[RMDB]
RNA sequence: GGGAACGACUCGAGUAGAGUCGAAAAAAUGUCUGCGAUGCUGAGAGUGCGGCAGAUGGUAUUAAUGGAGUGCCGAUGCUCGAAGAGUUCUUCGUCUAUAGCUACGUAGACGAACGCGCGAAUGCCUACGCGGUCUAUGAUCGCAUCCAGGGUCAUAAGAUAAGAACGUAUUCGUACGUUCUUAUCUAAAAGAAACAACAACAACAAC
Reactivity to DMS in 0.01 (KOAc 150mM, MgCl2 10mM, bicine 150mM(pH8.5), 24C), signal-to-noise 4, nucleotides 027 to 156: a100a080u000g010u000c010u000g000c060g010a140u000g010c020u000g000a220g010a130g030u000g000c010g010g040c010a050g010a090u010g030g010u010a110u010u010a130a160u020g030g000a100g070u000g020c000c020g010a210u000g020c000u010c010g010a120a090g020a230g010u000u000c050u010u000c000g030u000c000u000a040u000a140g020c150u000a090c070g000u000a020g010a030c000g010a020a040c060g000c050g030c020g000a090a140u000g010c030c010u010a050c060g000c010g020g010u000c020u010a090u000g010a060u000c010g020c050a040u010c090c040a110g000g010g010u000c030a090u000a110
Reactivity to 2A3 in 0.01 (KOAc 150mM, MgCl2 10mM, bicine 150mM(pH8.5), 24C), signal-to-noise 7, nucleotides 027 to 156: a000a010u140g030u010c020u010g020c060g080a080u040g010c020u040g020a020g000a010g120u070g030c000g010g000c010a010g020a110u070g040g020u110a080u150u160a180a120u180g100g000a080g050u030g010c000c020g150a140u070g010c000u020c020g030a050a030g020a010g050u050u050c010u030u010c010g000u000c010u010a060u040a070g090c080u080a040c080g010u010a000g010a000c000g010a040a020c040g010c000g000c010g090a100a030u090g010c000c010u030a040c030g000c010g010g020u000c020u070a120u240g040a050u080c030g000c030a020u000c030c030a040g040g000g020u110c040a050u050a160
An RNA of 207 nucleotides, treated with DMS and 2A3 and read out base by base. The RNA was probed in 150 mM KOAc, 10 mM MgCl2 and 150 mM bicine (pH 8.5) at 24 C. The 2A3 profile rests on 5,946 reads. The data come from the RNA Mapping Database (RMDB), library OK3TST. Values cover nucleotides 27 to 156.